[RMDB]
RNA sequence: GGGAACGACUCGAGUAGAGUCGAAAAUUUGGAUAAUGGUGUGUAAAUGCAUGACAGCUUAUGAUCAACCCACUGGAUCUGAAGAGAGAAGAUUAGCCAAGUAUAAGCAGCAGGGUAGAAUGCUGGACAUCAAGACACCAUUCGUGGUGUCUUGAUGAAAAGAAACAACAACAACAAC
Reactivity to 2A3 in 0.01 (KOAc 150mM, MgCl2 10mM, bicine 150mM(pH8.5), 24C), signal-to-noise 2, nucleotides 027 to 126: u050u000u040g040g010a040u090a140a030u160g020g050u040g020u030g020u110a080a080a120u160g000c030a000u040g040a060c030a040g030c040u080u030a070u150g040a080u060c000a040a090c000c010c020a040c040u030g050g040a040u040c000u070g070a100a030g040a020g010a000g000a090a010g010a020u060u050a040g010c010c000a000a030g010u060a110u020a230a010g040c030a000g000c020a000g020g080g040u050a050g090a090a090u060g000c010u030g040g000a000
Reactivity to DMS in 0.01 (KOAc 150mM, MgCl2 10mM, bicine 150mM(pH8.5), 24C), signal-to-noise 3, nucleotides 027 to 126: u010u010u010g010g030a050u000a090a040u000g030g000u010g030u010g010u000a040a100a110u010g000c050a040u010g000a120c100a100g010c050u010u000a110u000g010a070u000c070a090a100c010c030c020a090c140u010g010g000a040u010c030u020g010a060a050g000a110g010a060g020a100a090g000a070u000u000a060g000c050c020a030a090g000u000a070u010a070a090g010c040a050g010c040a060g000g010g000u000a060g000a080a070u000g000c010u000g000g000a270
An RNA of 177 nucleotides, treated with 2A3 and DMS and read out base by base. For 2A3, 1,430 sequencing reads were counted. The RNA was probed in 150 mM KOAc, 10 mM MgCl2 and 150 mM bicine (pH 8.5) at 24 C. DMS adducts were read by reverse transcription with MarathonRT. For 2A3 the reverse transcriptase was SuperScript II with manganese. The data come from the RNA Mapping Database (RMDB), library OK2TST.